[RMDB]
RNA sequence: GGGAACGACUCGAGUAGAGUCGAAAACGAGCGGCCCGAUCUGGCGCUGCUCGACGUGGUGAUGCCGCAGCGCAACGGGUACGAAACCCUGCGCGCACUCAAGAAGUUGCCGGCGGCGGCGGGCCUCCCCCUAUAUAGGAUUCGUCCUAUAUAGGGGAAAAGAAACAACAACAACAAC
Reactivity to 2A3 in 0.01 (KOAc 150mM, MgCl2 10mM, bicine 150mM(pH8.5), 24C), signal-to-noise 5, nucleotides 027 to 126: c010g010a010g030c010g010g000c010c010c010g050a300u160c190u230g040g010c090g000c040u010g000c000u000c000g010a030c050g040u070g000g040u050g040a130u130g020c000c020g000c040a040g010c000g000c010a040a090c070g010g000g030u110a070c120g120a220a070a030c000c000c000u000g000c010g010c010g000c010a010c010u060c020a070a140g100a090a040g180u120u090g080c070c040g070g010c030g000g000c000g000g030c010g010g030g000c000c000u020c020
Reactivity to DMS in 0.01 (KOAc 150mM, MgCl2 10mM, bicine 150mM(pH8.5), 24C), signal-to-noise 9, nucleotides 027 to 126: c030g010a030g010c010g010g010c000c010c020g010a160u010c180u010g020g020c160g020c000u000g020c010u000c010g020a030c120g020u000g010g020u000g010a130u010g010c010c010g010c020a180g020c020g010c010a060a300c250g000g010g020u000a110c240g000a100a140a070c010c010c000u000g010c300g010c010g020c010a040c060u000c090a130a120g010a100a080g010u000u000g020c060c060g020g020c070g010g010c020g000g000c030g000g000g000c020c020u000c080